[RMDB]
Source information
The record gives the reactivity of an RNA of 177 nucleotides to 2A3 and DMS. The reactions ran in a buffer of 150 mM KOAc, 10 mM MgCl2 and 150 mM bicine (pH 8.5), at 24 C. Reactivities are given for positions 27 through 126. It was measured as part of the RMDB library M2PK50.
RNA sequence: GGGAACGACUCGAGUAGAGUCGAAAACGACUUACCUUCGGGUAAGUCGACAUAGGUGAGUUCAUCGGAUAGCUGCCUAGGUGAGUUCAUCGGAUAGCUGGCACAUGUAACGGUUCGCCGUUACAAACGACAGUUCCAUGUUCGCAUGGAACUGUCGAAAAGAAACAACAACAACAAC
Reactivity to 2A3 in 0.01 (KOAc 150mM, MgCl2 10mM, bicine 150mM(pH8.5), 24C), signal-to-noise 1, nucleotides 027 to 126: c020g000a020c000u000u000a000c000c000u010u010c160g010g030g000u010a010a010g010u000c010g040a010c020a120u220a050g000g040u000g010a020g000u010u020c010a020u040c020g000g030a030u050a110g080c110u070g050c040c000u020a060g050g010u030g000a030g030u050u000c020a030u030c010g020g040a090u070a070g100c090u060g020g020c010a020c040a140u120g000u010a010a000c030g000g120u030u020c290g020c010c000g000u010u020a000c000a040a010a000
Reactivity to DMS in 0.01 (KOAc 150mM, MgCl2 10mM, bicine 150mM(pH8.5), 24C), signal-to-noise 1, nucleotides 027 to 126: c040g010a010c000u000u000a020c010c000u000u010c240g030g000g000u000a000a010g000u020c000g000a030c140a040u010a180g040g010u000g000a030g000u000u000c050a000u000c020g000g020a120u000a110g020c110u000g000c020c000u000a100g000g000u000g000a050g000u030u000c020a020u010c000g010g000a090u040a100g050c110u010g020g000c050a100c220a160u010g010u000a000a020c000g000g000u000u010c190g000c010c000g010u000u020a000c000a030a040a120